[RMDB]
Source: RMDB library OK3TST, as collected in RNAgym.
Structure probing data (2A3 and DMS) for a 207-nucleotide construct.
For 2A3, 2,491 sequencing reads were counted.
Conditions: 150 mM KOAc, 10 mM MgCl2 and 150 mM bicine (pH 8.5), 24 C.
RNA sequence: GGGAACGACUCGAGUAGAGUCGAAAAGCACGCUGCGCCGCACGCUCGACGCGAUCGGCAAGCAGACGAAGCCGCUGACCGUCGUCGUGCGCGUCGCCGAAGGCAAGGACGCCGACGAGACGACCUCGAACGUCAUCGGCACCGUGACGCCGGACGGCGUCAUAGUCCCGUUCGCGGGACUAUGACGAAAAGAAACAACAACAACAAC
Reactivity to 2A3 in 0.01 (KOAc 150mM, MgCl2 10mM, bicine 150mM(pH8.5), 24C), signal-to-noise 3, nucleotides 027 to 156: g210c030a020c100g090c100u110g020c020g000c060c040g020c020a010c000g040c090u090c040g000a010c020g030c030g050a140u000c000g020g000c060a070a040g030c050a070g150a090c200g090a100a010g000c010c010g000c180u030g000a000c000c000g000u000c000g000u000c000g010u000g000c000g010c000g020u010c010g000c000c010g070a110a030g040g000c050a020a100g070g020a050c080g000c010c000g000a000c010g120a090g000a040c010g050a070c020c100u150c140g070a180a030c010g000u010c010a040u020c000g010g000c010a010c000c030g060u020g050a050c100g010c010c000g030g030a020c060g010g010
Reactivity to DMS in 0.01 (KOAc 150mM, MgCl2 10mM, bicine 150mM(pH8.5), 24C), signal-to-noise 1, nucleotides 027 to 156: g040c040a090c230g060c020u000g000c000g100c050c030g000c080a050c030g000c020u000c050g000a020c010g000c000g000a030u000c000g010g000c000a060a060g030c000a120g000a140c170g000a150a140g000c000c020g040c020u010g000a040c100c000g030u000c020g010u000c010g000u000g010c000g030c040g010u000c030g030c030c000g020a090a130g030g010c050a050a030g020g000a070c030g020c000c000g000a060c050g000a130g000a120c010g010a120c020c010u000c090g000a030a100c020g030u010c000a140u000c000g000g030c000a240c010c000g010u020g020a050c060g020c000c030g010g020a160c040g010g000